[RMDB]
RNA sequence: GGGAACGACUCGAGUAGAGUCGAAAACUCUGAAGGCAUGUUCACCCCGUCCGAUGCGGAAGUUCGUGCUUCCGUCGAACGCGAAAGUCGGACGGCGGCCAUGAGUCGCAACGCAAAGCCGCGGCAAUAAGCUCGUCGUCGUUCGCGACGACGAGAACAGCAUAUUAACGUUCGCGUUAAUAUGCUGAAAAGAAACAACAACAACAAC
Reactivity to DMS in 0.01 (KOAc 150mM, MgCl2 10mM, bicine 150mM(pH8.5), 24C), signal-to-noise 2, nucleotides 027 to 156: c030u010c050u010g040a190a090g010g030c030a010u000g030u000u000c030a080c000c010c000c000g000u000c000c020g000a060u000g000c020g010g000a050a070g040u000u000c250g010u020g030c010u000u000c010c020g020u000c030g010a050a160c110g030c090g040a120a130a140g020u000c010g020g010a020c020g040g000c030g020g070c050c020a070u010g010a090g010u010c020g010c050a080a060c000g000c040a180a150a240g000c040c030g030c010g040g030c010a050a130u000a060a080g000c030u010c000g020u010c000g000u000c010g000u000u010c220g000c000g010a010c010g000a030c020g010a000g000a010a100
Reactivity to 2A3 in 0.01 (KOAc 150mM, MgCl2 10mM, bicine 150mM(pH8.5), 24C), signal-to-noise 5, nucleotides 027 to 156: c020u030c050u080g090a200a060g080g000c000a030u060g050u150u230c060a060c000c000c000c000g000u010c000c000g000a010u060g000c000g000g020a000a000g010u180u300c200g130u300g090c000u010u000c010c000g010u010c020g040a150a050c070g000c030g130a090a030a010g030u000c000g000g010a000c000g010g010c020g000g000c020c010a030u040g020a000g020u010c000g000c020a070a090c060g050c170a110a080a040g030c040c030g020c040g000g000c020a020a090u090a160a030g040c000u010c000g000u000c000g000u000c000g010u030u040c100g010c000g060a000c010g000a000c000g000a000g000a010a040